[RMDB]
RNA sequence: GGGAACGACUCGAGUAGAGUCGAAAAUUGAGAAGGGUUUAUCUAAUGGAGAAAAAUGACAUGCAAACAGAUAACCACAAUUUAGCAGGAUGAAGAGAAUAUUGCUGUCAUUUAGAAGAGGUUUAAAAGGAGAUCACAUUUGAUUUUGGAUUUGAAAGUGUAGGAUGAACUUCGGUUCAUCCUACACAAAAGAAACAACAACAACAAC
Reactivity to 2A3 in 0.01 (KOAc 150mM, MgCl2 10mM, bicine 150mM(pH8.5), 24C), signal-to-noise 2, nucleotides 027 to 156: u020u030g030a050g010a070a040g040g000g070u080u100u050a070u030c050u040a010a100u180g020g020a060g060a030a180a000a000a030u040g010a020c020a010u300g000c030a030a070a050c050a090g090a100u070a040a050c000c010a070c050a020a020u090u220u220a050g020c030a020g070g090a090u060g030a070a050g030a040g010a090a070u140a150u140u050g000c000u000g000u010c000a010u010u040u040a020g010a080a000g000a000g060g120u020u100u160a000a100a020a010g050g050a020g010a020u040c010a000c000a130u080u080u040g040a080u040u070u020u120g020g010a040u100u100u200g090a100a070a000
An RNA of 207 nucleotides, treated with 2A3 and read out base by base. For 2A3, 809 sequencing reads were counted. It was measured as part of the RMDB library OK3TST. The RNA was probed in 150 mM KOAc, 10 mM MgCl2 and 150 mM bicine (pH 8.5) at 24 C.